[RMDB]
RNA sequence: GGGAACGACUCGAGUAGAGUCGAAAAUCGGACGCCAGGAUCAGACCUCAGAUCCCAGGCUAUAAAGACCAGGAUCUUCACUGCUGGAUAUUGAUAGCAACACACGUGUGACAUACGUCCUAUGAGCCAUACGUGGAAACUUCGGUUUCCACGUAUGAAAAGAAACAACAACAACAAC
Reactivity to DMS in 0.01 (KOAc 150mM, MgCl2 10mM, bicine 150mM(pH8.5), 24C), signal-to-noise 5, nucleotides 027 to 126: u010c070g010g010a110c110g040c040c060a130g000g000a060u000c040a050g010a200c100c070u010c070a050g010a040u010c010c000c040a130g010g000c010u000a120u010a060a080a080g000a100c020c020a170g030g000a060u010c050u000u000c130a080c110u000g010c020u000g010g000a090u020a090u010u010g000a090u000a050g000c030a080a060c080a070c110a060c140g010u010g000u000g010a090c080a080u010a080c090g010u000c010c010u000a090u010g010a140g000c120
Reactivity to 2A3 in 0.01 (KOAc 150mM, MgCl2 10mM, bicine 150mM(pH8.5), 24C), signal-to-noise 3, nucleotides 027 to 126: u070c010g020g000a000c030g000c040c020a020g010g040a050u040c010a040g170a280c000c030u030c030a020g010a020u010c000c020c000a140g020g000c000u020a050u070a120a130a000g060a050c000c010a010g020g020a050u020c000u110u100c110a040c100u090g000c010u030g060g010a020u060a070u180u160g100a070u070a050g020c020a080a060c010a000c010a000c120g020u050g010u030g160a000c040a060u150a040c050g020u000c000c010u090a120u160g080a020g080c030
An RNA of 177 nucleotides, treated with DMS and 2A3 and read out base by base. It was measured as part of the RMDB library OK2TRN. The reactions ran in a buffer of 150 mM KOAc, 10 mM MgCl2 and 150 mM bicine (pH 8.5), at 24 C.